[RMDB]
RNA sequence: GGGAACGACUCGAGUAGAGUCGAAAAUUAUCCACGGCGGAAGCGGCUUGAGUAAUCAGCCUUCGACCGCCAGCUAACAAGCAGGCUUAAACCCGGAGGGAAGCAAUUCAGCACGGGGACCUGUCCGCACACACAACGGGUUCGCCCGUUGUGUGUGAAAAGAAACAACAACAACAAC
Reactivity to DMS in 0.01 (KOAc 150mM, MgCl2 10mM, bicine 150mM(pH8.5), 24C), signal-to-noise 2, nucleotides 027 to 126: u000u080a000u080c000c030a110c300g060g020c000g000g050a020a040g000c300g000g010c010u030u000g020a000g000u100a230a140u000c000a000g000c000c080u080u000c000g000a300c000c020g030c000c000a030g000c100u060a210a080c200a110a140g000c000a070g010g070c160u000u000a050a060a220c000c000c040g000g000a190g030g000g090a000a000g000c300a010a180u000u000c000a060g000c010a300c000g000g000g000g000a070c020c000u000g000u030c000c040g010
Reactivity to 2A3 in 0.01 (KOAc 150mM, MgCl2 10mM, bicine 150mM(pH8.5), 24C), signal-to-noise 1, nucleotides 027 to 126: u060u020a010u000c020c010a020c060g000g000c000g000g050a010a030g040c040g040g000c090u250u230g010a000g010u230a090a200u060c020a000g030c000c000u080u070c040g000a030c000c010g000c000c000a000g010c010u030a030a050c060a130a000g000c000a000g000g010c030u120u240a190a120a090c000c000c000g010g020a120g020g000g000a010a040g010c000a030a110u110u030c000a030g050c040a000c000g000g000g000g000a010c000c000u000g000u040c000c160g000

An RNA of 177 nucleotides, treated with DMS and 2A3 and read out base by base. 2A3 adducts were read by reverse transcription with SuperScript II with manganese. For 2A3, 1,270 sequencing reads were counted. For DMS, 1,041 sequencing reads were counted. Conditions: 150 mM KOAc, 10 mM MgCl2 and 150 mM bicine (pH 8.5), 24 C. For DMS the reverse transcriptase was MarathonRT.